The record gives the reactivity of an RNA of 177 nucleotides to 2A3 and DMS.
[RMDB]
RNA sequence: GGGAACGACUCGAGUAGAGUCGAAAAGAUAUGGAAUAAGUCGUCGAUAAGCGUAUGGUCGGAAACGACCAUCACGCUUUUGACGACGUCACUUCCUAAGUCAAAGUCCUUACUUCGGUAAGGACAAGAUAAGGCUGUACUUCGGUACAGCCUUAUCAAAAGAAACAACAACAACAAC
Reactivity to 2A3 in 0.01 (KOAc 150mM, MgCl2 10mM, bicine 150mM(pH8.5), 24C), signal-to-noise 2, nucleotides 027 to 126: g050a010u100a070u170g020g070a040a030u090a230a100g000u010c000g000u010c060g070a140u080a300a000g010c000g000u000a000u000g000g000u000c010g000g010a050a070a080c010g010a000c020c000a000u010c020a000c000g000c010u000u000u000u010g000a000c010g000a000c000g000u020c010a020c070u010u010c000c000u060a120a030g070u000c070a150a140a060g000u000c020c000u020u010a020c010u030u080c300g140g000u030a000a000g020g000a000c000a000a010
Reactivity to DMS in 0.01 (KOAc 150mM, MgCl2 10mM, bicine 150mM(pH8.5), 24C), signal-to-noise 3, nucleotides 027 to 126: g010a030u010a300u000g000g000a030a010u010a160a170g000u000c000g010u000c010g010a030u000a010a000g020c000g000u000a000u000g000g010u000c000g000g000a060a080a140c010g000a000c000c000a000u000c190a010c000g010c000u000u000u000u010g000a030c000g010a010c010g000u020c170a100c300u000u000c000c000u000a050a160g020u000c050a070a150a150g000u000c000c000u000u000a020c000u000u010c220g010g010u010a000a000g020g010a000c000a020a010
Record summary
It was measured as part of the RMDB library TTRDEL.